[RMDB]
RNA sequence: GGGAACGACUCGAGUAGAGUCGAAAAGAUAUGGACGAGCAUAGGGAGCUAUACCAUCGGAAACGAUGGCUAUAGCUUUGAUCUAUGGUUCGUCCUAAGUCAAACUCUCUUCCUUCGGGAAGAGAGAGUUGCAUAGCUUCUUCGGAAGCUAUGCAACAAAAGAAACAACAACAACAAC
Reactivity to DMS in 0.01 (KOAc 150mM, MgCl2 10mM, bicine 150mM(pH8.5), 24C), signal-to-noise 1, nucleotides 027 to 126: g000a000u000a300u020g010g030a020c000g020a010g000c000a020u000a000g010g010g010a020g040c000u000a010u000a070c030c000a020u000c000g020g000a080a110a120c010g020a020u000g000g000c300u000a000u010a000g020c000u000u000u000g010a030u000c000u000a000u000g020g010u000u000c000g010u000c000c010u000a000a060g020u000c010a210a060a210c010u000c000u010c010u000u000c000c000u000u020c300g040g010g010a020a000g010a010g000a000g000a000